An RNA of 207 nucleotides, treated with DMS and 2A3 and read out base by base.
RNA sequence: GGGAACGACUCGAGUAGAGUCGAAAAGACUUAACGUCAUCUACUGCGAUAGUAAGGUCAUCGGCAUCAAUGGAACUAGUAAUAAUAGUAAUUGAUUCUUGGUUCUUAAUAUAAGCGCCAAUUUCUGCGGUAGUCUGUUCUACCAAUUGAGAUAGCGAAUACACUCAGACUUCGGUCUGAGUGUAUUAAAAGAAACAACAACAACAAC
Reactivity to DMS in 0.01 (KOAc 150mM, MgCl2 10mM, bicine 150mM(pH8.5), 24C), signal-to-noise 2, nucleotides 027 to 156: g010a120c030u000u010a050a200c110g000u000c050a130u000c040u000a110c080u010g010c080g010a120u000a040g010u000a010a050g030g000u000c010a210u000c070g010g000c040a100u000c030a040a110u020g010g030a110a050c040u000a140g020u000a090a090u000a110a170u000a070g010u000a070a100u010u000g010a070u020u000c040u010u000g000g010u000u010c000u000u010a040a160u020a140u010a070a260g000c030g020c010c000a040a090u000u010u000c030u000g040c300g020g020u000a010g000u010c030u020g000u000u000c030u000a060c000c010a060a200u000u000g000a040g000a030u000a060g000c040g010
Reactivity to 2A3 in 0.01 (KOAc 150mM, MgCl2 10mM, bicine 150mM(pH8.5), 24C), signal-to-noise 3, nucleotides 027 to 156: g030a000c070u110u110a080a040c040g070u030c040a110u000c050u190a160c060u110g080c040g050a050u040a050g090u090a110a070g060g000u020c020a050u040c040g020g010c010a010u030c010a020a060u070g080g060a100a050c030u000a030g060u110a020a190u100a140a070u000a080g040u090a100a070u040u030g030a020u070u000c000u050u040g030g000u040u080c010u080u020a180a200u180a160u050a180a020g040c000g020c010c000a030a010u010u040u000c030u010g010c020g040g010u000a000g020u010c090u090g050u070u020c000u030a070c000c040a050a090u110u120g040a070g030a040u100a040g140c020g060

The DMS profile rests on 3,198 reads. Conditions: 150 mM KOAc, 10 mM MgCl2 and 150 mM bicine (pH 8.5), 24 C. For 2A3 the reverse transcriptase was SuperScript II with manganese. The data come from the RNA Mapping Database (RMDB), library OK3TST.